Structure probing data (2A3 and DMS) for a 207-nucleotide construct.

[RMDB]
RNA sequence: GGGAACGACUCGAGUAGAGUCGAAAAACAAUCAGUAUAGAUCAAGUUUUUAAGUGAUACUUUCUCAGAAAUGUAUGUGUACAGGUCAUUGAAGAUUAUCUAUAAGCAAUUGGUCUUGGAAAAGCAUAAUUUUUGAAGAACUCUCUUGCCCUGUGAGCAAAUGAAGGGUGUUCGCACCCUUCAUUUGAAAAGAAACAACAACAACAAC
Reactivity to 2A3 in 0.01 (KOAc 150mM, MgCl2 10mM, bicine 150mM(pH8.5), 24C), signal-to-noise 2, nucleotides 027 to 156: a000c030a020a020u030c020a010g220u240a200u300a290g020a030u100c090a130a160g040u040u050u000u050u120a040a010g010u010g020a000u040a190c050u030u040u000c030u020c000a040g070a050a050a010u090g060u090a000u010g060u020g020u020a030c000a010g000g020u030c000a020u000u030g010a080a030g050a090u090u100a050u140c060u090a090u080a300a050g080c030a050a000u090u200g020g050u000c000u030u060g030g070a100a080a000a020g050c020a000u030a050a020u060u040u000u010u020g050a130a110g010a050a030c030u020c000u000c020u110u070g030c000c000c000u010g050u030g040a050g040
Reactivity to DMS in 0.01 (KOAc 150mM, MgCl2 10mM, bicine 150mM(pH8.5), 24C), signal-to-noise 2, nucleotides 027 to 156: a010c000a080a040u010c040a130g040u000a110u000a160g000a080u000c020a130a080g020u000u000u000u000u010a050a100g020u000g000a050u000a090c060u000u000u010c020u000c020a100g000a050a080a080u000g000u000a010u020g030u010g020u000a130c090a010g010g020u000c000a050u010u000g000a060a130g000a120u010u010a060u010c070u020a070u020a090a100g000c070a060a070u000u020g040g030u000c040u010u000g000g000a040a060a040a140g010c030a060u010a010a050u000u000u010u010u000g010a040a080g010a020a050c060u000c050u000c020u000u000g010c020c070c020u000g020u000g000a190g000
For 2A3, 538 sequencing reads were counted.